Conditions: 150 mM KOAc, 10 mM MgCl2 and 150 mM bicine (pH 8.5), 24 C. The record gives the reactivity of an RNA of 177 nucleotides to 2A3 and DMS. The DMS profile rests on 2,853 reads. The 2A3 profile rests on 2,499 reads. In probing experiments dimethyl sulfate is read out at A N1 and C N3, which are open when not base-paired.
[RMDB]
RNA sequence: GGGAACGACUCGAGUAGAGUCGAAAACUGAUGCGCUGAAUCAUGCUUCAAUCAUUGAUGGAGUGCGGCUAUGUAAAGCCAAACGUUAUCGCUAUGCUAAUAAUGAUAUGAGCGAAUUGAAAGCACAUAUAUGGUCCUUGUUCGCAAGGACCAUAUAAAAAGAAACAACAACAACAAC
Reactivity to 2A3 in 0.01 (KOAc 150mM, MgCl2 10mM, bicine 150mM(pH8.5), 24C), signal-to-noise 4, nucleotides 027 to 126: c030u050g010a030u080g050c010g000c020u040g040a030a050u050c030a030u140g020c000u200u150c020a040a040u000c010a010u030u080g050a020u080g030g050a080g010u000g000c020g000g040c000u030a040u270g250u300a290a130a080g010c040c010a010a000a040c030g070u120u080a030u050c020g000c060u110a060u240g000c000u050a090a060u120a130a020u200g050a020u040a170u170g040a020g010c020g030a090a090u060u070g040a090a030a000g000c020a000c020a030
Reactivity to DMS in 0.01 (KOAc 150mM, MgCl2 10mM, bicine 150mM(pH8.5), 24C), signal-to-noise 4, nucleotides 027 to 126: c030u000g010a080u000g030c040g020c010u010g000a100a050u000c080a110u020g000c020u000u000c060a070a040u010c040a010u010u000g000a080u000g010g020a110g010u000g000c300g010g010c020u000a050u010g040u010a100a100a030g020c010c010a030a300a050c030g000u010u000a050u000c030g000c090u010a100u010g010c070u000a060a080u020a030a020u000g000a060u000a070u000g010a120g000c000g000a070a080u000u000g000a080a070a060g000c000a000c060a080